[RMDB]
RNA sequence: GGGAACGACUCGAGUAGAGUCGAAAAGUUACCCAUUUCGAUGGGUAACACACCGAACUCAGAAGUGAAACCCCGUAGCGCCGAUGGUAGUGUGGGGUCAAAGCUGUAGACCUUUCGAGGUCUACAAUGAACCAGAACGAUUCGUCGUUCUGGUUCAAAAAGAAACAACAACAACAAC
Reactivity to 2A3 in 0.01 (KOAc 150mM, MgCl2 10mM, bicine 150mM(pH8.5), 24C), signal-to-noise 1, nucleotides 027 to 126: g000u000u010a000c030c000c000a000u070u140u050c170g100a010u000g070g000g030u000a000a000c010a000c010a010c000c020g020a110a060c020u060c130a130g040a300a050g170u080g070a090a000a030c010c010c000c010g000u010a030g090c050g040c000c010g220a110u300g040g010u060a200g020u060g060u080g040g000g000g020u000c010a000a000a030g030c000u010g010u020a000g020a010c000c030u010u080u070c170g050a000g000g030u000c010u000a010c000a010a040
Reactivity to DMS in 0.01 (KOAc 150mM, MgCl2 10mM, bicine 150mM(pH8.5), 24C), signal-to-noise 1, nucleotides 027 to 126: g000u000u000a030c010c010c010a010u000u000u000c220g020a010u000g000g000g040u000a000a010c000a080c170a160c010c020g000a100a110c240u000c070a080g020a180a100g000u010g000a080a200a050c030c010c000c030g000u000a120g070c040g000c020c040g000a130u020g000g090u010a050g000u000g000u010g000g040g010g000u000c060a040a130a270g000c090u010g000u000a020g010a000c000c000u000u000u020c140g000a020g020g010u000c010u010a000c010a050a080